[RMDB]
RNA sequence: GGGAACGACUCGAGUAGAGUCGAAAAGGGGUCGAUUGUCAGCGUCCGCAGAUACAACGACAUGAGCUGAAGCCUCCACGGCUCAACAGCGUUGAGUAGGACGCUUGGAUUUAUCGACGGAGGCACCCAAAGCCUUCUUGCUUCGGCAAGAAGGCAACAUAUAGAGACUCUUCGGAGUCUCUAUAUGAAAAGAAACAACAACAACAAC
Reactivity to 2A3 in 0.01 (KOAc 150mM, MgCl2 10mM, bicine 150mM(pH8.5), 24C), signal-to-noise 3, nucleotides 027 to 156: g050g000g020g020u020c000g010a040u120u160g060u120c010a010g010c000g020u000c010c010g070c180a010g020a120u140a070c040a000a010c000g080a020c060a170u140g000a000g000c010u020g020a090a010g020c010c000u010c010c000a040c020g020g010c000u040c020a020a110c070a080g230c020g000u010u020g040a090g050u120a120g030g000a000c010g060c010u000u070g030g000a020u090u250u170a160u080c000g000a000c000g000g020a000g000g000c020a020c000c000c010a070a030a000g000c000c000u000u030c010u010u000g000c000u040u050c180g120g000c010a000a000g000a000a000g000g000c000a000a000
Reactivity to DMS in 0.01 (KOAc 150mM, MgCl2 10mM, bicine 150mM(pH8.5), 24C), signal-to-noise 1, nucleotides 027 to 156: g000g000g010g030u000c030g020a030u000u040g020u000c030a070g020c020g000u000c000c030g030c200a200g000a150u000a090c030a060a040c000g030a150c100a300u000g010a070g000c000u000g000a030a150g050c000c000u000c010c050a290c010g010g000c020u010c010a030a160c080a150g020c040g020u020u000g010a190g020u000a110g000g020a020c000g040c010u020u000g010g010a050u010u000u000a040u000c010g000a050c040g000g030a000g010g060c010a040c020c000c010a060a090a150g010c010c000u000u030c000u000u000g010c000u000u000c280g040g030c000a010a010g020a020a000g020g070c000a000a040